[RMDB]
RNA sequence: GGGAACGACUCGAGUAGAGUCGAAAAGAUAUGGAGUCCUAUAGGGAGAGCCCAAUCGGAAACGAUUGUGCGCUCGAGGAUCUAUGAGGACUCCUAAGUCAAAGACAAACUCUUCGGAGUUUGUCAACAAUAAAACACACUUCGGUGUGUUUUAUUGAAAAGAAACAACAACAACAAC
Reactivity to DMS in 0.01 (KOAc 150mM, MgCl2 10mM, bicine 150mM(pH8.5), 24C), signal-to-noise 4, nucleotides 027 to 126: g000a020u000a140u010g010g010a040g020u000c000c000u000a050u000a010g010g010g010a020g010a010g000c010c010c000a000a010u000c000g010g000a050a040a080c010g010a010u000u000g000u010g010c300g030c000u000c000g000a080g010g000a050u000c000u000a010u000g010a100g010g020a020c000u000c000c000u000a000a040g000u000c010a130a120a180g000a010c000a010a000a010c000u000c000u000u010c240g030g010a020g000u000u000u000g010u000c010a060a110
Reactivity to 2A3 in 0.01 (KOAc 150mM, MgCl2 10mM, bicine 150mM(pH8.5), 24C), signal-to-noise 3, nucleotides 027 to 126: g020a000u030a010u080g000g000a000g000u010c000c020u000a010u020a010g040g010g000a060g000a000g010c010c010c000a010a000u000c010g020g000a020a030a000c000g000a000u000u020g060u090g100c300g010c090u010c000g000a040g010g020a000u000c000u010a030u100g280a140g010g020a000c000u010c000c000u000a000a000g000u000c030a120a070a050g000a000c000a000a010a000c010u030c010u110u190c300g150g000a000g010u030u000u000g010u010c000a000a010
An RNA of 177 nucleotides, treated with DMS and 2A3 and read out base by base. Reactivities are rounded to 0.1 and cut off at 0 and 3. 2A3 adducts were read by reverse transcription with SuperScript II with manganese. For DMS, 7,648 sequencing reads were counted. The reactions ran in a buffer of 150 mM KOAc, 10 mM MgCl2 and 150 mM bicine (pH 8.5), at 24 C.